Background
Chemical mapping of a 177-nucleotide RNA with DMS. The data come from the RNA Mapping Database (RMDB), library TTRINS.

[RMDB]
RNA sequence: GGGAACGACUCGAGUAGAGUCGAAAAGAUAUGGAACCGUUAAACCAUUCGCUUGGUGGGAGCUGCAGCUCGGAAACGAGCUGGCAGCAUCGAUCACCUGGCGAAUGGUUUAACGGUUCCUAAGUCAGCUUCUAUUCUAGUUCGCUAGAAUAGAAGCAAAAGAAACAACAACAACAAC
Reactivity to DMS in 0.01 (KOAc 150mM, MgCl2 10mM, bicine 150mM(pH8.5), 24C), signal-to-noise 1, nucleotides 027 to 126: g010a040u000a300u000g000g000a000a000c000c010g030u000u000a000a010a030c000c000a000u000u010c010g010c010u000u000g000g010u020g010g000g020a070g020c000u000g000c010a020g010c030u000c000g010g020a110a110a250c030g000a010g000c000u010g010g050c000a000g020c000a110u000c230g000a120u020c020a010c010c000u000g000g030c000g000a000a000u000g000g010u000u000u000a000a000c000g040g000u000u000c000c000u000a000a070g020u000c070a220